[RMDB]
RNA sequence: GGGAACGACUCGAGUAGAGUCGAAAAUCAGCGCGUACCUGCUGAACGUGAUAGUAAAGAGCUCAGUAACUGAAUGGGCGGGUAGAGAUGUGACAGCAGAUUUACAUUAUCAGGAGGUCUCUGUGGCGAAAACUCUAAACUUCGGUUUAGAGUUUUCAAAAGAAACAACAACAACAAC
Reactivity to DMS in 0.01 (KOAc 150mM, MgCl2 10mM, bicine 150mM(pH8.5), 24C), signal-to-noise 3, nucleotides 027 to 126: u010c020a040g000c050g000c100g020u010a110c090c060u010g010c020u000g020a100a100c110g000u000g020a070u010a090g010u010a050a120a120g010a170g010c030u000c020a040g000u020a090a080c090u000g000a140a080u000g000g000g010c070g010g010g010u000a030g010a060g000a090u010g030u010g010a080c180a070g020c040a050g010a150u000u000u000a070c040a080u010u010a140u000c050a060g000g000a140g010g010u000c030u000c030u010g010u000g000g020c170
Reactivity to 2A3 in 0.01 (KOAc 150mM, MgCl2 10mM, bicine 150mM(pH8.5), 24C), signal-to-noise 2, nucleotides 027 to 126: u020c000a020g000c020g000c020g080u020a060c000c020u090g050c010u010g000a030a010c020g100u070g060a100u100a150g070u080a090a110a090g060a010g000c010u030c070a000g060u070a150a070c050u070g070a140a080u050g020g000g010c010g000g000g000u030a060g000a000g010a020u020g050u110g110a050c040a010g010c010a000g000a050u020u020u130a050c030a010u020u080a050u190c000a010g040g020a030g000g070u010c020u000c020u120g100u040g060g000c000